Record summary
Source: RMDB libraries RFM100 and RFMREP, as collected in RNAgym. Chemical mapping of a 177-nucleotide RNA with 2A3 and DMS. Values cover nucleotides 27 to 126. The RNA was probed in 150 mM KOAc, 10 mM MgCl2 and 150 mM bicine (pH 8.5) at 24 C. DMS adducts were read by reverse transcription with MarathonRT.
RNA sequence: GGGAACGACUCGAGUAGAGUCGAAAAGCUGAGGCACGAAAGCCAGGGUAGCGAACGGGAUUAGAUACCCCGGUAGUCUUGGCUGUAAACGAUGAACACUAGGUUGGGGGGGCUUGUUCCUCCCAGCACACUUCAAAAGCUUCGGCUUUUGAAGUGUAAAAGAAACAACAACAACAAC
Reactivity to 2A3 in 0.01 (KOAc 150mM, MgCl2 10mM, bicine 150mM(pH8.5), 24C), signal-to-noise 6, nucleotides 027 to 126: g020c030u030g010a030g020g030c030a020c150g200a220a060a010g000c000c000a000g020g000g010u040a030g020c010g040a090a040c060g080g070g020a050u130u110a060g030a080u100a050c010c000c000c010g010g010u040a020g030u020c000u000u000g010g000c020u010g040u080a050a080a010c050g080a070u150g090a090a020c060a040c170u080a060g100g030u010u000g000g000g000g000g010g010g010c020u040u080g050u090u020c010c000u000c000c000c000a000g000c010
Reactivity to DMS in 0.01 (KOAc 150mM, MgCl2 10mM, bicine 150mM(pH8.5), 24C), signal-to-noise 6, nucleotides 027 to 126: g020c000u000g000a020g010g020c000a110c220g020a090a130a120g000c000c000a020g000g000g000u000a040g000c040g010a110a170c100g010g020g010a130u020u010a140g010a100u010a030c020c000c010c020g010g010u010a090g010u000c000u000u000g010g000c000u000g010u020a070a120a150c110g000a150u020g000a100a080c130a080c130u030a040g000g000u000u000g000g010g000g000g010g010g010c070u020u010g010u020u010c000c000u010c000c000c000a000g020c020